Structure probing data (DMS and 2A3) for a 177-nucleotide construct. Conditions: 150 mM KOAc, 10 mM MgCl2 and 150 mM bicine (pH 8.5), 24 C. For DMS, 5,365 sequencing reads were counted. The data come from the RNA Mapping Database (RMDB), library TTRDES.
RNA sequence: GGGAACGACUCGAGUAGAGUCGAAAAGAUAUGGAAAGUGAGUAGCUUUUGACGCCUUAAGGGUCGGAAACGACCUGAAGGGCGAUAAGCUACCCUUUCCUAAGUCAAACACCGGUUCGCCGGUGAAGUGCUAUAGUUAGUUCGCUAACUAUAGCACAAAAGAAACAACAACAACAAC
Reactivity to DMS in 0.01 (KOAc 150mM, MgCl2 10mM, bicine 150mM(pH8.5), 24C), signal-to-noise 5, nucleotides 027 to 126: g000a040u000a300u010g000g000a010a010a020g020u020g020a200g030u000a010g010c000u000u000u010u010g020a300c100g020c000c000u010u000a050a300g000g000g010u000c000g000g000a090a070a200c000g010a000c000c000u000g000a220a140g010g010g010c020g010a040u000a010a010g010c000u000a010c000c010c010u000u000u000c000c000u000a020a060g010u000c040a170a140a300c010a030c010c010g000g000u000u020c280g030c010c000g010g010u010g010a040a060
Reactivity to 2A3 in 0.01 (KOAc 150mM, MgCl2 10mM, bicine 150mM(pH8.5), 24C), signal-to-noise 5, nucleotides 027 to 126: g010a020u070a020u130g010g020a030a010a010g070u170g220a210g070u020a010g000c010u070u080u110u270g260a180c030g010c000c000u020u010a080a050g000g000g000u010c000g020g000a070a070a030c010g000a010c010c010u010g000a020a040g000g000g000c010g010a010u010a000a000g010c000u000a000c000c010c010u000u000u000c000c000u000a080a030g000u000c030a030a070a130c010a010c010c010g000g030u090u060c300g030c110c000g060g000u010g010a080a030